[RMDB]
RNA sequence: GGGAACGACUCGAGUAGAGUCGAAAAGUCUAUGCCGAAUACGCGAACGGCGACAAGUGCGCGCCGUCGCUGCCGCCGUUCGUGCGCAGCCCGUUCGCGUGCGGCGCGGCGCGCGGUGCGCCGGCGAUAUGAGCAUUAGUUUCGACUAAUGCUCAUAAAAAGAAACAACAACAACAAC
Reactivity to DMS in 0.01 (KOAc 150mM, MgCl2 10mM, bicine 150mM(pH8.5), 24C), signal-to-noise 8, nucleotides 027 to 126: g020u010c050u000a130u010g020c010c010g000a150a110u010a090c130g010c040g000a090a150c030g000g000c010g010a060c100a080a140g020u010g010c010g010c010g010c040c000g010u010c030g020c010u000g030c030c010g000c060c070g030u000u000c010g030u000g010c020g010c090a130g010c080c050c070g000u000u000c040g010c000g010u010g020c000g000g000c010g010c000g000g000c000g020c050g010c020g000g000u000g010c000g020c010c010g000g010c070g010a210
Reactivity to 2A3 in 0.01 (KOAc 150mM, MgCl2 10mM, bicine 150mM(pH8.5), 24C), signal-to-noise 6, nucleotides 027 to 126: g020u010c030u080a110u240g030c010c010g080a120a070u230a200c070g030c040g140a230a060c010g050g010c020g020a060c060a130a100g100u090g230c010g000c000g000c000c010g040u090c070g000c020u040g010c020c020g030c030c060g040u060u060c000g000u010g000c030g000c020a060g070c080c050c050g080u060u050c040g000c000g030u050g010c000g020g000c000g000c000g000g020c000g010c030g000c000g000g010u030g000c010g000c000c010g000g000c020g030a040